[RMDB]
RNA sequence: GGGAACGACUCGAGUAGAGUCGAAAAUAGAUGCUUCAGAGGUUUGAUCAUCCAUACGGGUGGCUCCUCGCUCACUGAUAGUUACAGCAGCCGUUUCCUUGACAAUGUCACUGGCAUUGGCAGCAUCAUCGCUCAUCUAAUUCGUUAGAUGAGCGAUAAAAGAAACAACAACAACAAC
Reactivity to DMS in 0.01 (KOAc 150mM, MgCl2 10mM, bicine 150mM(pH8.5), 24C), signal-to-noise 5, nucleotides 027 to 126: u010a120g010a060u000g000c040u010u000c130a160g010a070g020g010u000u010u000g010a120u000c020a000u000c000c010a180u000a110c250g030g020g020u000g000g000c020u000c010c020u000c010g000c070u010c100a100c050u010g010a090u010a090g010u000u010a080c130a060g020c180a040g010c010c030g010u000u010u000c000c010u000u010g010a040c010a000a040u000g000u000c010a120c210u010g010g020c010a030u000u000g000g010c030a030g010c100a050u010c140
Reactivity to 2A3 in 0.01 (KOAc 150mM, MgCl2 10mM, bicine 150mM(pH8.5), 24C), signal-to-noise 4, nucleotides 027 to 126: u110a040g060a030u040g000c020u070u100c110a030g030a030g110g070u130u250u220g110a220u070c010a000u000c010c010a080u110a300c140g000g020g010u000g010g010c000u010c000c000u000c010g000c020u030c020a060c040u050g020a120u050a130g090u090u090a060c040a030g040c010a000g000c040c020g010u020u040u000c000c000u010u030g010a020c020a030a040u020g000u040c030a030c300u150g030g000c000a020u010u010g020g000c010a010g000c010a040u040c020